[RMDB]
RNA sequence: GGGAACGACUCGAGUAGAGUCGAAAAUAAUUAAUUUUGGCUCUCAAAACAAAGAAGCCAAUGUCCUGGGAGAUAGCGCUGCAUUGUUCUCGGCUUUUGAGGCCCAUAAAUGUCAGCCAAGGCUGCAGCGUGAGUCGAGUUUCGACUCGACUCACGCAAAAGAAACAACAACAACAAC
Reactivity to 2A3 in 0.01 (KOAc 150mM, MgCl2 10mM, bicine 150mM(pH8.5), 24C), signal-to-noise 1, nucleotides 027 to 126: u180a000a030u250u250a050a100u050u200u040u080g000g050c000u080c000u050c000a000a070a070a110c190a030a080a000g190a060a000g000c000c010a000a000u000g010u020c000c000u010g000g000g000a010g000a000u130a050g000c000g000c050u000g010c000a050u090u090g000u260u000c090u000c000g030g030c080u130u050u100u150g210a060g010g000c000c000c000a020u230a190a100a050u200g070u300c000a000g040c000c000a030a030g070g000c000u070g000c000a050